Record summary:
Conditions: 150 mM KOAc, 10 mM MgCl2 and 150 mM bicine (pH 8.5), 24 C. Chemical mapping of a 177-nucleotide RNA with DMS and 2A3. 2A3 adducts were read by reverse transcription with SuperScript II with manganese. Source: RMDB library M2PK50, as collected in RNAgym. Reactivities are given for positions 27 through 126. For DMS the reverse transcriptase was MarathonRT.
[RMDB]
RNA sequence: GGGAACGACUCGAGUAGAGUCGAAAACGCGAACUGUUCGCAGUUCGCGAAAUAACAAACAACAGCUAUCCUACUGCGAUAAGCCCUAGCUAAGUAGGUAAAAAAGAGGAAAGUUCGCUUUCCUCAACUCUAACAACGGGUUCGCCCGUUGUUAGAGAAAAGAAACAACAACAACAAC
Reactivity to DMS in 0.01 (KOAc 150mM, MgCl2 10mM, bicine 150mM(pH8.5), 24C), signal-to-noise 2, nucleotides 027 to 126: c020g000c000g060a010a010c030u000g000u000u010c220g010c000a000g010u010u010c040g020c010g030a060a010a090u010a030a110c180a050a050a020c130a050a080c060a090g000c130u000a100u000c030c000u000a000c000u000g000c050g000a160u000a120a160g000c000c010c010u000a270g010c090u010a120a050g030u000a000g000g000u000a000a050a100a080a080a040g000a030g000g030a000a010a000g020u000u030c210g040c000u000u000u000c000c000u010c010a010a050
Reactivity to 2A3 in 0.01 (KOAc 150mM, MgCl2 10mM, bicine 150mM(pH8.5), 24C), signal-to-noise 1, nucleotides 027 to 126: c010g000c010g000a000a020c010u030g050u050u080c210g020c120a000g000u000u000c000g000c000g000a010a000a000u030a010a020c060a090a090a010c030a010a030c030a040g090c030u080a070u210c000c000u000a000c000u000g010c000g030a010u030a190a040g000c000c000c020u010a020g030c030u010a060a000g000u000a010g000g020u020a060a090a030a000a000a000g010a000g000g010a040a000a000g000u090u160c260g010c170u000u000u000c000c010u000c000a020a020